Overview:
The record gives the reactivity of an RNA of 177 nucleotides to 2A3 and DMS. 2A3 adducts were read by reverse transcription with SuperScript II with manganese.
RNA sequence: GGGAACGACUCGAGUAGAGUCGAAAAGGUGCGGUGUGUUCGGCAACUGCGCGACGCAAUGCAACAGCACGUCGAAGAACUACGCGAACUGACGAUCUCCGAGGUGGGCGCGCCGCGGAUGCUCACCGAUACGGACUCCUUUCGAGGAGUCCGUAUCAAAAGAAACAACAACAACAAC
Reactivity to 2A3 in 0.01 (KOAc 150mM, MgCl2 10mM, bicine 150mM(pH8.5), 24C), signal-to-noise 6, nucleotides 027 to 126: g120g000u080g010c050g050g000u100g010u010g010u090u060c040g060g060c050a130a090c080u120g020c060g010c030g060a010c030g020c100a070a040u110g020c030a160a130c040a130g030c010a000c020g040u030c020g050a120a080g030a100a090c070u150a070c100g020c020g060a090a040c030u040g040a030c040g040a050u020c050u000c050c020g020a050g020g010u040g010g020g000c050g000c010g030c030c010g000c060g010g040a050u080g010c000u030c010a020c010c020
Reactivity to DMS in 0.01 (KOAc 150mM, MgCl2 10mM, bicine 150mM(pH8.5), 24C), signal-to-noise 2, nucleotides 027 to 126: g000g000u000g010c070g000g000u000g030u000g000u000u000c040g000g000c050a200a060c090u010g010c110g020c110g010a060c060g040c100a030a080u040g000c050a140a250c230a180g010c040a070c100g020u000c000g020a120a030g000a060a100c150u060a050c050g050c120g000a100a010c060u000g000a110c130g020a050u030c030u020c000c050g000a020g000g030u000g020g020g030c010g010c060g000c030c080g050c000g000g000a090u040g010c010u000c000a040c040c020

It was measured as part of the RMDB library OK1LIB.